[RMDB]
RNA sequence: GGGAACGACUCGAGUAGAGUCGAAAAGGGGUCUUGCGACUAUGGCUUUGUCAGCAGCUGGGAGAGCUGAAGCCUCCACGGCUUCAGCUGCUUGGAUUUAAGCCACGAAUCGCAAGACGGAGGCACCCAAACUGUAUAUCCUUCGGGAUAUACAGAACUUUAAUGUACACUUCGGUGUACAUUAAAGAAAAGAAACAACAACAACAAC
Reactivity to DMS in 0.01 (KOAc 150mM, MgCl2 10mM, bicine 150mM(pH8.5), 24C), signal-to-noise 1, nucleotides 027 to 156: g020g010g000g020u000c000u000u000g010c010g020a040c030u000a040u000g000g010c000u000u010u010g030u010c020a120g060c020a050g000c000u000g020g020g060a300g000a070g000c020u000g000a090a190g000c090c020u000c040c070a300c120g020g040c020u000u000c030a020g010c000u000g030c000u010u000g040g000a050u000u000u000a030a020g020c000c020a030c070g000a040a080u000c030g030c000a000a030g000a030c010g000g010a050g030g050c040a180c030c000c020a040a060a190c000u030g000u000a000u000a010u000c000c030u000u020c300g030g030g020a030u000a000u000a000c010a020g000a060a160
Reactivity to 2A3 in 0.01 (KOAc 150mM, MgCl2 10mM, bicine 150mM(pH8.5), 24C), signal-to-noise 5, nucleotides 027 to 156: g070g000g000g000u000c000u000u000g000c000g000a020c080u090a060u060g000g000c010u040u050u060g040u070c020a020g010c010a020g000c020u060g030g070g040a300g050a010g030c040u060g050a090a020g020c010c020u090c090c060a110c090g020g020c000u070u070c030a000g000c010u000g000c000u030u150g090g000a050u170u140u200a010a010g000c010c000a030c050g070a140a300u000c010g000c000a000a000g000a000c000g000g000a010g010g000c040a060c010c000c000a060a080a030c000u000g000u010a000u000a000u000c010c000u020u050c160g120g000g000a000u010a000u010a000c000a000g000a000a000